[RMDB]
RNA sequence: GGGAACGACUCGAGUAGAGUCGAAAAUCGUCGAGCUUCGGCUCGACGAAAAACCCUAACUGUAAAGCGAAGGGUGGAGCGAACGGCGCCUAACGACCGCUCAAAGAGACCCCUUCGGGGGUCUCAAUCGAUAAGGAGAGUUCGCUCUCCUUAUCGAAAAAGAAACAACAACAACAAC
Reactivity to DMS in 0.01 (KOAc 150mM, MgCl2 10mM, bicine 150mM(pH8.5), 24C), signal-to-noise 2, nucleotides 027 to 126: u000c000g020u030c000g000a020g020c000u010u010c140g030g000c000u000c000g000a010c000g020a000a020a050a090a060c000c010c000u010a190a070c110u020g000u020a070a140a080g000c050g000a090a120g020g000g010u000g000g020a070g020c020g000a060a090c040g010g000c090g000c020c030u000a090a090c060g010a110c140c020g010c030u000c050a130a130a180g000a030g000a000c020c000c010c000u000u000c230g040g010g030g030g020u000c000u000c000a020a020